[RMDB]
Chemical mapping of a 177-nucleotide RNA with 2A3 and DMS. The reactions ran in a buffer of 150 mM KOAc, 10 mM MgCl2 and 150 mM bicine (pH 8.5), at 24 C. It was measured as part of the RMDB library TTRDES. Values are in units of 0.01, from 0 to 300, in steps of 10. For 2A3 the reverse transcriptase was SuperScript II with manganese.
RNA sequence: GGGAACGACUCGAGUAGAGUCGAAAAAAAAAGAUAUGGACCCUGCAAGCUUGGAUUUAAUAGAUGCGUACUCGGAAACGAGUACGCCACUCUAUUUGUCAGCUUGGUCAGGGUCCUAAGUCAAAAACAUAUAACUGACGUUCGCGUCAGUUAUAUGAAAAGAAACAACAACAACAAC
Reactivity to 2A3 in 0.01 (KOAc 150mM, MgCl2 10mM, bicine 150mM(pH8.5), 24C), signal-to-noise 3, nucleotides 027 to 126: a010a000a020a020a040g060a060u150a050u130g000g000a000c000c010c000u000g010c000a000a000g000c040u300u300g170g020a150u300u300u220a020a010u020a000g010a030u300g000c000g020u010a010c010u000c030g020g040a050a100a080c000g000a000g010u000a000c010g000c000c010a020c000u010c000u000a010u010u020u020g030u030c000a010g010c000u020u030g030g060u170c010a000g020g000g000u000c000c000u010a010a010g000u010c000a050a000a000a050a060
Reactivity to DMS in 0.01 (KOAc 150mM, MgCl2 10mM, bicine 150mM(pH8.5), 24C), signal-to-noise 3, nucleotides 027 to 126: a050a040a050a100a090g000a070u010a300u010g010g000a010c000c000c000u010g000c000a010a010g010c000u000u020g020g000a020u000u010u010a010a000u000a010g000a010u010g000c010g000u000a000c000u000c000g010g000a100a080a190c000g010a020g010u000a000c000g000c020c060a020c130u000c000u000a000u010u000u000g010u000c000a020g000c000u000u000g030g010u010c020a010g010g020g000u000c000c000u000a000a070g010u000c030a070a090a090a140a190